[RMDB]
RNA sequence: GGGAACGACUCGAGUAGAGUCGAAAAGGUGAACAUCACCGGCUCAGCUGGAUUCUCGAACCCCCGACACCUCUACGCUCAGCGCACACAACCCCGAAAAAGACUUCGGCCCCCGCCGGGACGGCAAUCGAAGCCCAUAAUUCGUUAUGGGCUUCGAAAAAGAAACAACAACAACAAC
Reactivity to 2A3 in 0.01 (KOAc 150mM, MgCl2 10mM, bicine 150mM(pH8.5), 24C), signal-to-noise 1, nucleotides 027 to 126: g010g030u050g040a030a040c040a170u050c000a020c040c040g010g000c020u000c020a010g010c030u030g060g020a110u070u050c040u000c020g070a090a080c020c010c020c010c000g020a000c050a020c020c000u030c040u030a020c010g000c060u030c010a040g100c040g030c030a000c010a010c000a010a100c000c000c010c020g060a010a000a000a000a000g050a030c030u010u030c040g000g000c000c040c000c000c000g050c020c020g000g010g080a010c010g000g010c000a000a020
Reactivity to DMS in 0.01 (KOAc 150mM, MgCl2 10mM, bicine 150mM(pH8.5), 24C), signal-to-noise 1, nucleotides 027 to 126: g000g010u000g000a260a120c200a040u000c010a000c000c000g000g010c040u000c030a100g000c060u000g000g020a070u060u030c110u010c070g000a110a120c050c000c000c000c020g000a010c030a120c000c000u000c000u020a080c030g020c010u000c010a160g010c160g000c000a040c100a030c160a020a160c080c000c070c050g030a030a010a030a060a030g000a160c030u000u000c030g000g000c110c010c000c020c040g010c020c010g000g090g000a030c030g000g000c010a070a080